The record gives the reactivity of an RNA of 170 nucleotides to 2A3 and DMS. For DMS the reverse transcriptase was MarathonRT. 2A3 is a SHAPE reagent: it acylates the 2'-hydroxyl of flexible nucleotides of all four kinds. Source: RMDB library 15KLIB, as collected in RNAgym. Conditions: 150 mM KOAc, 10 mM MgCl2 and 150 mM bicine (pH 8.5), 24 C. 2A3 adducts were read by reverse transcription with SuperScript II with manganese.
[RMDB]
RNA sequence: GGGAACGACUCGAGUAGAGUCGAAAAUUCUGCAAUGUGUAAUUGGUGCUUGAUUAGCCAAGAUUCCAUAACUCACUACCCAGCUCUUAAGAUGGUUCAAACACAUCUUAGCCACUAUGUUCUUAACCCAGUACCGUGUUCGCACGGUACAAAAGAAACAACAACAACAAC
Reactivity to 2A3 in 0.01 (KOAc 150mM, MgCl2 10mM, bicine 150mM(pH8.5), 24C), signal-to-noise 8, nucleotides 027 to 129: u030u020c020u030g050c020a030a110u130g030u020g010u110a050a050u040u040g040g000u060g020c030u050u070g060a140u130u120a040g100c070c000a020a040g060a120u070u070c000c010a040u040a060a030c020u000c040a030c010u040a060c010c000c000a030g030c020u030c010u070u030a010a010g020a010u010g040g020u060u150c080a100a090a000c100a010c000a100u010c020u030u020a000g040c030c000a070c060u090a080u170g050u070u020c060u040u060a060a090c000c020c000a000
Reactivity to DMS in 0.01 (KOAc 150mM, MgCl2 10mM, bicine 150mM(pH8.5), 24C), signal-to-noise 5, nucleotides 027 to 129: u050u010c000u020g030c100a010a010u060g030u000g030u050a090a070u020u050g010g010u030g030c070u040u030g000a120u090u000a130g040c070c060a100a070g000a100u000u000c010c000a000u030a110a170c000u020c050a070c040u020a130c070c000c050a110g010c090u070c120u020u030a010a040g020a050u020g020g050u000u040c260a030a030a030c150a090c050a090u010c010u000u070a030g030c140c080a000c000u000a070u070g000u040u020c000u040u040a000a060c030c000c020a130